[RMDB]
Structure probing data (2A3 and DMS) for a 177-nucleotide construct. For DMS the reverse transcriptase was MarathonRT. For DMS, 1,288 sequencing reads were counted. The reactions ran in a buffer of 150 mM KOAc, 10 mM MgCl2 and 150 mM bicine (pH 8.5), at 24 C. It was measured as part of the RMDB library OK2TRN. For 2A3, 913 sequencing reads were counted.

RNA sequence: GGGAACGACUCGAGUAGAGUCGAAAAAUGCAAAAUCCUAGUGGUGAGGAUAUGACAUUGUUUUGUCAAAUGGUAUCUAGCGUACCAUUUAUACCACCUAUGGCCGAUUUACCCGAUAAGGGUAAGCCGUGCGUAGACGAUUCGUCGUCUACGCACGAAAAGAAACAACAACAACAAC
Reactivity to 2A3 in 0.01 (KOAc 150mM, MgCl2 10mM, bicine 150mM(pH8.5), 24C), signal-to-noise 2, nucleotides 027 to 126: a000u210g000c030a060a010a010a230u120c020c000u020a050g110u030g100g000u030g000a110g090g020a060u070a090u290g030a060c020a010u050u120g180u190u300u100u040g010u020c000a090a000a000u000g000g020u030a020u080c110u050a100g090c060g110u000a010c000c000a000u000u030u000a040u020a000c040c020a020c000c010u080a180u260g060g020c000c020g160a050u040u040u000a020c000c000c010g020a140u220a290a120g000g000g000u010a000a000g000c000
Reactivity to DMS in 0.01 (KOAc 150mM, MgCl2 10mM, bicine 150mM(pH8.5), 24C), signal-to-noise 2, nucleotides 027 to 126: a050u010g030c120a120a040a110a100u000c000c000u010a060g070u000g010g000u000g000a070g010g000a060u020a100u000g000a020c020a030u000u030g010u000u030u000u000g010u000c100a080a040a000u000g010g000u000a000u010c030u010a150g000c230g010u000a000c010c000a020u000u000u010a150u010a050c040c050a010c040c110u000a080u000g000g010c090c190g000a070u000u000u000a000c000c010c020g010a110u000a090a120g000g000g000u010a010a020g000c140